Source: RMDB library OK2TST, as collected in RNAgym. An RNA of 177 nucleotides, treated with 2A3 and DMS and read out base by base.
RNA sequence: GGGAACGACUCGAGUAGAGUCGAAAAUCUUGGCGCCGUUCUGUUCGGACAGUGCUGCCGGGAGCAGCGCGGGAACUGCCAAGAAAACCAGACCCGCGAGCCCGCAAAUGUAGCCGUAGCGUGCGAGCGUCGGUGCAUAGUUCGCUAUGCACCGACGAAAAGAAACAACAACAACAAC
Reactivity to 2A3 in 0.01 (KOAc 150mM, MgCl2 10mM, bicine 150mM(pH8.5), 24C), signal-to-noise 2, nucleotides 027 to 126: u020c000u010u010g010g010c020g000c010c040g020u000u000c020u050g070u060u070c040g050g020a070c040a140g150u050g090c050u070g050c040c010g070g040g000a090g000c010a000g020c010g000c030g010g000g010a110a140c030u080g010c030c020a030a000g000a030a010a000a000c010c000a030g050a090c000c000c020g000c010g040a020g030c030c000c000g010c020a070a080a070u200g010u070a040g030c040c020g030u000a020g000c040g020u030g020c000g000a070g030
Reactivity to DMS in 0.01 (KOAc 150mM, MgCl2 10mM, bicine 150mM(pH8.5), 24C), signal-to-noise 2, nucleotides 027 to 126: u000c010u000u000g000g020c000g020c110c060g010u000u000c040u000g000u000u000c070g020g010a070c030a070g010u010g010c050u010g020c020c030g010g030g030a100g020c040a020g050c030g030c010g000g000g030a040a070c120u010g010c020c010a030a040g000a070a050a130a150c070c070a180g010a130c060c000c030g010c030g020a190g000c010c020c020g010c100a020a060a110u000g010u010a090g010c030c050g020u000a140g030c040g020u020g000c050g000a090g010

Conditions: 150 mM KOAc, 10 mM MgCl2 and 150 mM bicine (pH 8.5), 24 C. For 2A3 the reverse transcriptase was SuperScript II with manganese. Reactivities are given for positions 27 through 126.